An RNA of 177 nucleotides, treated with 2A3 and DMS and read out base by base.
[RMDB]
RNA sequence: GGGAACGACUCGAGUAGAGUCGAAAAAUCAACUUUAGAAUUUUAGAUCUAUCCCAGCCGAAUUUAGAAUUUAAGAUUUUCGACUUUCGGCUCGGGAGAGUUAAUAAUUGGCUGGGAGAGAAAGUAAAUCUAAAGUGAGAUUCGUCUCACUUUAGAUAAAAGAAACAACAACAACAAC
Reactivity to 2A3 in 0.01 (KOAc 150mM, MgCl2 10mM, bicine 150mM(pH8.5), 24C), signal-to-noise 2, nucleotides 027 to 126: a010u040c030a060a060c010u130u180u220a070g080a070a020u040u020u060u100a050g000a010u000c010u040a070u030c000c020c000a010g000c000c010g040a050a020u010u070u080a100g000a040a010u040u070u190a300a090g030a090u030u030u000u070c000g010a000c000u070u070u040c140g100g000c010u000c000g010g050g000a050g000a010g020u000u020a100a070u070a140a100u120u050g010g000c010u000g000g090g000a010g040a000g050a070a070a010g060u110a130a170
Reactivity to DMS in 0.01 (KOAc 150mM, MgCl2 10mM, bicine 150mM(pH8.5), 24C), signal-to-noise 2, nucleotides 027 to 126: a100u000c020a100a130c190u010u010u010a230g010a040a050u000u000u000u000a020g010a040u000c020u000a050u010c010c000c000a010g010c000c000g000a060a010u000u010u000a040g000a010a030u010u000u010a070a120g010a060u000u000u000u000c020g000a040c030u000u010u010c110g020g000c010u010c050g020g000g010a020g010a110g000u000u000a030a070u000a050a080u010u000g010g000c020u010g000g000g020a180g010a080g020a080a050a130g010u000a030a080
2A3 adducts were read by reverse transcription with SuperScript II with manganese. Source: RMDB library M2PK90, as collected in RNAgym. The 2A3 profile rests on 1,429 reads. The DMS profile rests on 2,087 reads.